Chemical mapping of a 207-nucleotide RNA with 2A3. Values cover nucleotides 27 to 156. As a SHAPE reagent, 2A3 marks flexible, mostly unpaired nucleotides at the ribose 2'-OH. The reactions ran in a buffer of 150 mM KOAc, 10 mM MgCl2 and 150 mM bicine (pH 8.5), at 24 C. For 2A3 the reverse transcriptase was SuperScript II with manganese. For 2A3, 2,235 sequencing reads were counted.
RNA sequence: GGGAACGACUCGAGUAGAGUCGAAAAGGUUGGGGUCGACUGGCCUCCGGUGGCGAAGCUGAGUUGAGCUUCGCUCUUCUCUUCUUAGCUGUAACCGGACCGGUCCCCUUCACCCGAGCGCUGCUUGCCGCUAGUCGAGCGGACUUCCAAGUCUCCCGAAUCUUAGCUUGUUCGCAAGCUAAGAUUCAAAAGAAACAACAACAACAAC
Reactivity to 2A3 in 0.01 (KOAc 150mM, MgCl2 10mM, bicine 150mM(pH8.5), 24C), signal-to-noise 2, nucleotides 027 to 156: g030g010u020u020g030g020g000g000u150c110g030a000c010u010g020g010c010c010u010c000c010g050g010u000g000g010c000g020a030a010g010c020u000g000a010g040u010u010g010a000g000c060u260u230c250g000c000u030c000u010u000c000u000c000u030u010c000u000u030a010g000c000u020g010u040a000a010c000c010g010g000a000c000c000g010g000u000c010c000c000c000u020u050c060a010c000c000c000g040a070g040c120g000c050u150g000c010u040u050g030c010c020g060c060u050a050g130u160c080g060a020g000c000g030g000a030c010u220u050c110c040a050a020g020u010c010u000c020c020c010